[RMDB]
RNA sequence: GGGAACGACUCGAGUAGAGUCGAAAAGUUUGGUUACUUCUGUUGGUGAUUCUAGUGAAAUCGCCACUAAAAUGUUUGAUUCCUUUGUUAAUAGUUUCGUCUCGCUGUAUAAUGUCACACGCGAUAAACCUCUAGAAUUGUUCGCAAUUCUAGAGGUAAAAGAAACAACAACAACAAC
Reactivity to DMS in 0.01 (KOAc 150mM, MgCl2 10mM, bicine 150mM(pH8.5), 24C), signal-to-noise 2, nucleotides 027 to 126: g020u010u000u000g000g020u010u000a070c040u010u010c120u010g010u000u000g040g010u010g020a010u000u000c030u010a210g020u030g010a060a030a010u000c020g010c010c000a000c100u010a040a040a130a030u010g000u010u010u000g000a160u010u000c020c020u010u000u000g000u000u010a140a090u010a110g000u000u000u000c040g010u010c140u000c030g030c030u000g000u000a060u000a080a130u010g030u030c160a050c050a030c140g030c030g000a030u000a070a140